[RMDB]
RNA sequence: GGGAACGACUCGAGUAGAGUCGAAAACCUACUCAAUACGUCCUCGUCGUACAGAAGGGUAACAUGUUUUCCGAACAUCCGCGCUUGGGUAUACGAGUAUACACCUUACCCAACCCUCGCCAACGGGAGUGCAUCCACGAGUUCGCUCGUGGAUGAAACCAUUAAUCUCGUUCGCGAGAUUAAUGGUAAAAGAAACAACAACAACAAC
Reactivity to 2A3 in 0.01 (KOAc 150mM, MgCl2 10mM, bicine 150mM(pH8.5), 24C), signal-to-noise 5, nucleotides 027 to 156: c000c010u030a040c040u050c050a060a150u090a120c040g060u060c010c020u070c040g060u020c000g020u050a080c040a080g130a130a090g080g000g000u050a070a070c070a130u080g050u030u070u060u030c040c030g040a080a030c040a090u060c020c050g070c020g000c100u050u060g040g000g000u030a050u020a080c070g020a020g120u020a030u040a050c090a100c020c030u050u080a020c000c000c010a000a050c000c000c010u030c010g040c030c020a050a020c000g000g000g010a050g060u070g030c010a000u000c000c000a000c000g010a000g020u070u080c140g060c080u000c000g000u000g000g000a000u000g000a000a000
Reactivity to DMS in 0.01 (KOAc 150mM, MgCl2 10mM, bicine 150mM(pH8.5), 24C), signal-to-noise 2, nucleotides 027 to 156: c030c020u000a080c010u010c020a060a120u000a040c060g010u000c040c000u010c020g040u000c050g020u040a130c080a070g010a180a070g000g000g010u000a050a110c080a070u000g000u000u010u000u020c050c030g010a130a070c050a050u000c040c000g000c060g020c060u000u000g020g000g030u000a050u000a080c090g010a110g030u000a110u000a060c120a140c080c040u010u000a020c000c030c000a130a120c040c020c030u000c120g030c020c040a080a080c050g000g000g000a080g040u020g010c010a010u000c000c000a020c000g020a060g020u000u000c300g070c000u000c000g030u000g010g030a000u000g010a020a090